[RMDB]
RNA sequence: GGGAACGACUCGAGUAGAGUCGAAAAGUUUAAAAACGAAAAUUGGCUUUGCUAUGUUAGCUUUAGGUGUUUUUGCACUUUCAGCUAUAAUUAUUUUUAGCUAGUAGAAUACAAGUUAGACGUAAUAAUUACAUCAGGUGUUCGCACCUGAUGUAAUAAAAGAAACAACAACAACAAC
Reactivity to 2A3 in 0.01 (KOAc 150mM, MgCl2 10mM, bicine 150mM(pH8.5), 24C), signal-to-noise 3, nucleotides 027 to 126: g010u060u100u170a080a100a020a000a000c060g100a080a070a040a100u070u070g040g000c010u050u100u140g000c000u000a000u120g070u060u010a000g000c000u000u010u020a010g000g010u010g060u000u090u090u190u300g000c000a000c000u000u010u010c010a010g000c010u000a020u050a080a040u060u200a140u030u140u030u010u040a010g000c020u020a020g000u020a030g160a150a060u160a100c100a100a000g070u080u060a050g020a040c020g020u000a030a050u040a170
Reactivity to DMS in 0.01 (KOAc 150mM, MgCl2 10mM, bicine 150mM(pH8.5), 24C), signal-to-noise 3, nucleotides 027 to 126: g000u040u000u030a030a050a060a060a090c090g000a120a080a090a050u000u010g010g010c010u000u040u000g010c130u000a010u000g010u020u000a000g010c000u000u000u000a030g010g020u000g020u000u010u020u040u060g000c000a030c000u000u000u000c060a020g020c000u000a010u030a100a050u010u010a030u000u010u030u000u000a020g010c000u020a030g010u010a050g010a120a070u030a080c090a100a070g010u000u010a010g010a160c190g000u020a010a030u010a100